[RMDB]
RNA sequence: GGGAACGACUCGAGUAGAGUCGAAAAUCUGUUUACUAGGAAUCGUGAAGUCUAACUCUGACUACGAUUCCACAAACAGAAAGAAGUUUGUGACAAGUCCGAGUUAGACUUUAGUCAGGACUGCUCACUACUCGAAAGAAUUCGUUCUUUCGAGUAGAAAAGAAACAACAACAACAAC
Reactivity to DMS in 0.01 (KOAc 150mM, MgCl2 10mM, bicine 150mM(pH8.5), 24C), signal-to-noise 4, nucleotides 027 to 126: u010c040u000g000u010u000u010a120c160u010a120g000g010a090a070u010c070g010u010g010a060a030g010u000c010u000a010a050c050u010c050u010g010a010c010u010a070c100g000a110u000u010c120c000a020c040a000a000a010c000a070g000a090a100a000g010a130a090g000u000u000u000g010u000g000a110c060a050a040g000u000c000c120g010a080g000u000u000a030g000a010c000u000u000u000a030g000u000c040a090g000g010a110c030u000g000c060u000c060a210
Reactivity to 2A3 in 0.01 (KOAc 150mM, MgCl2 10mM, bicine 150mM(pH8.5), 24C), signal-to-noise 2, nucleotides 027 to 126: u030c030u020g100u090u150u100a150c110u130a060g070g060a070a050u060c020g040u060g080a070a010g010u000c000u000a000a010c010u010c020u050g010a010c010u070a090c090g040a060u000u050c030c010a000c000a000a000a000c000a010g090a030a090a000g100a070a030g000u010u020u010g050u010g000a010c020a030a000g000u000c020c000g020a010g000u010u040a000g010a000c000u000u020u000a000g010u000c000a000g020g040a030c010u010g020c010u010c030a050